Record summary
Structure probing data (DMS and 2A3) for a 177-nucleotide construct. It was measured as part of the RMDB library OK1LIB.

RNA sequence: GGGAACGACUCGAGUAGAGUCGAAAAGAGCGUCGAGAGACGAAGAGAAGUGCAUUGAUCCACAACGGAGAACGUAAUAAUGCACACAUGUGGGUUAGUGUCCGGAACAACGGGCACAAGAGGCAGAAAUUACGUCGGAGUUCGCUCCGACGUAAUUAAAAGAAACAACAACAACAAC
Reactivity to DMS in 0.01 (KOAc 150mM, MgCl2 10mM, bicine 150mM(pH8.5), 24C), signal-to-noise 4, nucleotides 027 to 126: g010a140g000c030g020u010c000g000a140g000a300g020a030c020g010a080a040g000a070g010a100a090g020u010g000c000a030u000u000g000a140u010c010c000a080c220a080a100c120g030g000a120g010a090a130c080g000u030a110a050u010a030a040u000g000c000a010c020a080c140a090u010g010u010g000g000g000u010u000a090g000u010g000u000c000c010g020g000a130a090c270a180a170c020g000g000g030c000a010c010a030a020g020a080g020g000c020a050g010a100
Reactivity to 2A3 in 0.01 (KOAc 150mM, MgCl2 10mM, bicine 150mM(pH8.5), 24C), signal-to-noise 3, nucleotides 027 to 126: g050a010g040c020g030u000c020g000a010g000a000g040a070c050g020a100a000g050a000g070a230a090g000u000g000c000a030u000u010g040a000u010c020c040a070c030a240a080c170g040g000a110g020a110a020c040g030u060a010a050u040a120a000u090g010c000a010c010a000c000a040u070g030u070g020g050g040u000u070a050g000u000g000u000c000c000g040g030a020a090c040a110a030c020g000g010g000c000a000c000a000a020g040a010g070g000c040a000g060a040